[RMDB]
RNA sequence: GGGAACGACUCGAGUAGAGUCGAAAACUUGCCUGGGGUGGAAGCAUUAAAACUAAUCAGGAUAGUUUGUCAGUAGCGUGUCCAUCCGCAGCUGGCCGGCGAAUGUAAUGAUUGGACUAAGCAUGUAGUGCCGACGGUGUAGUAAUUUCGGACGGGGCUAAUGGAAAGAGUUCGCUCUUUCCAUUAGAAAAGAAACAACAACAACAAC
Reactivity to 2A3 in 0.01 (KOAc 150mM, MgCl2 10mM, bicine 150mM(pH8.5), 24C), signal-to-noise 3, nucleotides 027 to 156: c020u030u120g010c000c010u040g010g020g020g020u060g010g050a060a030g030c040a040u130u110a040a080a020a070c050u080a070a050u100c030a030g090g030a060u020a030g030u020u040u020g030u010c010a010g020u080a040g040c020g010u070g040u010c020c020a060u030c020c000g000c010a010g000c000u010g000g000c000c030g020g010c010g020a070a070u070g020u150a110a070u100g060a010u050u100g000g020a040c010u050a010a040g010c020a020u100g080u150a020g040u070g060c000c000g010a020c050g000g000u060g000u000a050g010u040a010a200u070u090u090c050g010g020a030c010g010g020g000g000
Reactivity to DMS in 0.01 (KOAc 150mM, MgCl2 10mM, bicine 150mM(pH8.5), 24C), signal-to-noise 2, nucleotides 027 to 156: c070u000u010g010c000c020u000g000g000g060g020u000g010g030a100a120g000c060a140u000u000a080a040a080a120c040u000a020a110u000c040a120g010g010a160u010a100g010u000u000u000g010u010c010a040g040u000a070g020c030g040u000g020u010c050c050a080u010c040c050g020c040a190g030c010u000g020g010c000c040g000g030c010g020a080a040u000g010u020a080a090u000g000a120u000u000g020g020a120c070u010a100a160g030c040a080u000g010u000a050g030u010g030c020c030g010a030c100g030g040u000g000u000a030g000u010a040a120u000u010u000c010g020g000a080c010g020g040g000g020